This 177-nucleotide RNA was probed chemically with DMS and 2A3. The RNA was probed in 150 mM KOAc, 10 mM MgCl2 and 150 mM bicine (pH 8.5) at 24 C. The DMS profile rests on 2,435 reads. Source: RMDB library OK2TST, as collected in RNAgym.

RNA sequence: GGGAACGACUCGAGUAGAGUCGAAAAUACGUUGAAGACCGAGGCGAAGGUAAGUAUACAUUCUUCGGUAAAGCUGAAGUAAUCGAUGCAAGUACUGUUCGUAUUACUGGUCUAGCACCUCGUAUGACUUAACCAGGCUUUUCGAAGCCUGGUUAAGAAAAGAAACAACAACAACAAC
Reactivity to DMS in 0.01 (KOAc 150mM, MgCl2 10mM, bicine 150mM(pH8.5), 24C), signal-to-noise 3, nucleotides 027 to 126: u000a020c030g010u000u010g000a100a040g020a040c010c000g010a150g020g010c040g000a030a150g000g030u010a050a100g000u000a020u010a060c100a050u000u000c000u000u000c010g000g020u010a050a120a170g000c010u020g000a040a030g010u020a020a020u000c080g020a080u010g000c040a110a130g000u000a040c030u000g020u000u000c000g010u010a070u010u020a060c040u010g030g000u000c010u020a050g000c110a260c060c050u000c030g000u000a020u000g010a170
Reactivity to 2A3 in 0.01 (KOAc 150mM, MgCl2 10mM, bicine 150mM(pH8.5), 24C), signal-to-noise 1, nucleotides 027 to 126: u000a000c010g010u020u060g060a050a000g000a010c000c020g050a020g030g030c050g010a000a000g000g020u010a010a030g020u020a030u040a080c030a030u050u000c000u000u000c000g000g110u040a300a090a050g120c030u050g000a040a000g060u190a040a020u090c090g010a020u010g000c060a200a030g130u000a060c030u040g240u170u010c030g000u030a020u110u210a120c060u140g000g000u000c040u000a010g050c040a120c060c020u000c000g000u030a010u030g070a010